The data come from the RNA Mapping Database (RMDB), library 15KLIB.
Structure probing data (DMS and 2A3) for a 170-nucleotide construct.
High 2A3 reactivity points to a flexible backbone, as in loops and unpaired stretches.
For DMS, 11,372 sequencing reads were counted.
Conditions: 150 mM KOAc, 10 mM MgCl2 and 150 mM bicine (pH 8.5), 24 C.
2A3 adducts were read by reverse transcription with SuperScript II with manganese.
[RMDB]
RNA sequence: GGGAACGACUCGAGUAGAGUCGAAAAUUGAAGGUAAAACAGCCUGUGGGUGAAACACACCCACAGGGCCCAUCGGGCGCUAGCACUGUGGUAUCACGGUACCUUUGUGCGCCUGUUUUACCGAAGGCGGCGGUGCUCUUCGGAGCACCGAAAAGAAACAACAACAACAAC
Reactivity to DMS in 0.01 (KOAc 150mM, MgCl2 10mM, bicine 150mM(pH8.5), 24C), signal-to-noise 3, nucleotides 027 to 129: u090u040g000a120a070g000g020u010a030a010a050a010c000a020g040c000c030u020g010u020g020g020g080u000g010a130a200a070c300a160c000a030c060c010c000a050c000a020g010g010g020c000c030c030a150u070c250g050g010g010c010g020c000u060a110g060c000a020c000u020g000u020g000g000u000a010u020c000a000c300g040g010u030a010c000c000u000u020u000g010u040g000c050g060c010c020u040g050u000u000u000u000a010c000c020g030a000a090g000g010c080g030g030
Reactivity to 2A3 in 0.01 (KOAc 150mM, MgCl2 10mM, bicine 150mM(pH8.5), 24C), signal-to-noise 2, nucleotides 027 to 129: u110u120g050a100a010g010g010u010a000a000a000a000c010a000g000c000c010u010g000u000g000g000g000u040g070a060a080a010c120a010c010a000c060c000c000a000c020a000g000g000g000c000c000c010a170u140c160g000g000g000c000g000c050u070a050g020c010a000c010u040g030u020g070g000u010a000u050c050a040c250g100g000u000a000c000c000u050u140u060g000u000g000c020g000c000c000u010g000u000u000u000u000a000c000c010g010a000a000g070g000c020g010g000